[RMDB]
Background: This 177-nucleotide RNA was probed chemically with 2A3 and DMS. The reactions ran in a buffer of 150 mM KOAc, 10 mM MgCl2 and 150 mM bicine (pH 8.5), at 24 C. 2A3 adducts were read by reverse transcription with SuperScript II with manganese. High 2A3 reactivity points to a flexible backbone, as in loops and unpaired stretches.
RNA sequence: GGGAACGACUCGAGUAGAGUCGAAAAGGCACUAUCUUCGGAUAGUGCCAAAACGGGAAAACGGCCUCCCGUAAAGAAAAGAUCGAAACGAUCAAAAGGCCGAAAUCUCCCGGUUCGCCGGGAGAAACAUCUUGUUAAUGUUCGCAUUAACAAGAUGAAAAGAAACAACAACAACAAC
Reactivity to 2A3 in 0.01 (KOAc 150mM, MgCl2 10mM, bicine 150mM(pH8.5), 24C), signal-to-noise 3, nucleotides 027 to 126: g010g000c000a000c000u000a010u010c010u030u050c090g000g010a000u010a000g000u010g000c000c000a000a000a000a000c010g010g000g000a020a070a010a080c000g010g000c000c000u010c000c000c000g000u020a060a100a000g090a020a070a000a020g000a000u010c010g080a300a140a150c120g000a000u000c020a000a050a030a050g000g000c000c000g000a000a000a000u010c000u000c000c020c010g000g020u030u030c160g040c050c010g000g000g000a000g000a000a000a010
Reactivity to DMS in 0.01 (KOAc 150mM, MgCl2 10mM, bicine 150mM(pH8.5), 24C), signal-to-noise 4, nucleotides 027 to 126: g010g010c000a000c000u000a000u000c000u000u010c210g030g000a020u000a000g020u000g010c000c000a000a000a050a020c000g010g000g000a040a040a110a200c010g010g000c000c000u010c000c000c000g000u000a030a060a150g000a070a070a060a150g000a000u000c010g010a070a130a150c120g000a000u000c010a060a030a090a090g020g010c000c000g000a020a080a130u000c000u000c000c000c010g000g010u010u020c210g030c000c000g040g010g000a000g000a010a060a130